[RMDB]
RNA sequence: GGGAACGACUCGAGUAGAGUCGAAAACGGCAGAUGUAAAUUGCCAGUUAAAUAUAACUGCAAAAAAUACAAACUCUUACGCUUUAGCUGCCUAAAAACCAGCUAGCGUGACUUCUACAAGAUUGCUUGUGUCCUGUUAGAAGUCUCAAAAUAGCAAGAGAAAUGAUACCUUCGGGUAUCAUUUCUCAAAAGAAACAACAACAACAAC
Reactivity to 2A3 in 0.01 (KOAc 150mM, MgCl2 10mM, bicine 150mM(pH8.5), 24C), signal-to-noise 1, nucleotides 027 to 156: c000g060g050c030a030g020a090u110g030u070a010a180a300u050u000g060c060c010a000g000u020u050a080a300a110u240a080u070a080a060c040u040g000c050a050a000a000a000a060a050u070a100c050a060a210a240c030u070c030u140u130a030c010g000c000u110u190u040a000g000c010u000g030c020c030u030a060a060a000a010a010c000c000a000g010c000u000a000g020c000g000u000g000a000c000u010u010c000u010a000c000a100a020g000a060u040u080g080c000u190u100g030u040g020u030c000c020u010g010u000u030a000g020a000a020g000u000c000u010c020a080a140a050a090u120a090g030c030a080a080